Chemical mapping of a 177-nucleotide RNA with 2A3 and DMS.
2A3 adducts were read by reverse transcription with SuperScript II with manganese.
The 2A3 profile rests on 19,760 reads.
The DMS profile rests on 14,994 reads.
The data come from the RNA Mapping Database (RMDB), library M2PK50.
RNA sequence: GGGAACGACUCGAGUAGAGUCGAAAACAAAUACCGUUCGCGGUAUUUGAAAUACCGAAACCUUCGUGCCGUCAGAAGUUAAGAGGUGCUUGCUCUCGUUAAAAAUCAGCUGAUUCGUCAGCUGAAACACCAUUAGUAAGUUCGCUUACUAAUGGUGAAAAGAAACAACAACAACAAC
Reactivity to 2A3 in 0.01 (KOAc 150mM, MgCl2 10mM, bicine 150mM(pH8.5), 24C), signal-to-noise 9, nucleotides 027 to 126: c000a000a010a000u000a000c000c000g020u030u060c240g020c010g100g000u000a010u000u010u020g010a030a010a010u130a020c020c000g040a090a050a030c010c020u050u060c040g060u080g050c040c010g050u060c020a050g020a110a020g100u090u150a110a020g030a020g040g040u030g020c050u030u080g020c000u010c000u010c050g090u070u090a070a090a030a030a070u030c010a000g000c000u000g010a020u030u060c140g080u020c080a000g000c000u000g000a000a000a000
Reactivity to DMS in 0.01 (KOAc 150mM, MgCl2 10mM, bicine 150mM(pH8.5), 24C), signal-to-noise 8, nucleotides 027 to 126: c010a010a010a010u000a000c000c000g020u000u020c210g020c010g010g000u000a000u000u000u010g010a060a080a090u000a140c030c010g010a100a110a100c120c030u000u010c030g010u010g000c020c020g000u000c070a100g010a070a060g010u010u010a050a080g000a120g010g000u000g010c080u000u000g000c050u000c020u000c050g010u000u010a020a050a070a120a110u000c000a010g000c000u000g000a020u000u010c180g010u000c000a010g010c000u000g000a010a060a140